An RNA of 177 nucleotides, treated with DMS and read out base by base. The reactions ran in a buffer of 150 mM KOAc, 10 mM MgCl2 and 150 mM bicine (pH 8.5), at 24 C. Reactivities are given for positions 27 through 126.
RNA sequence: GGGAACGACUCGAGUAGAGUCGAAAAUUCUUAAAAUACCGCCAUACUUAAUGAUUGGUAAUUCCUUACUAGUUAAUGAGUUUCAGACUUAAGUAUGAUGUUGUGUUUGCAUAUAGUUCGGGAAACCACAACAUACAGUCUUCGGACUGUAUGUUGUAAAAGAAACAACAACAACAAC
Reactivity to DMS in 0.01 (KOAc 150mM, MgCl2 10mM, bicine 150mM(pH8.5), 24C), signal-to-noise 2, nucleotides 027 to 126: u000u010c030u000u000a070a040a050a050u010a010c030c030g000c050c010a000u000a000c000u000u000a010a000u010g000a190u010u010g010g010u000a000a010u000u010c010c040u000u000a010c030u010a150g010u010u000a000a000u000g010a010g000u000u000u000c020a040g010a180c060u000u000a000a000g000u000a000u000g010a060u000g010u000u000g020u000g030u000u000u000g010c170a070u000a080u000a090g010u000u000c060g000g000g010a110a050a150c080c090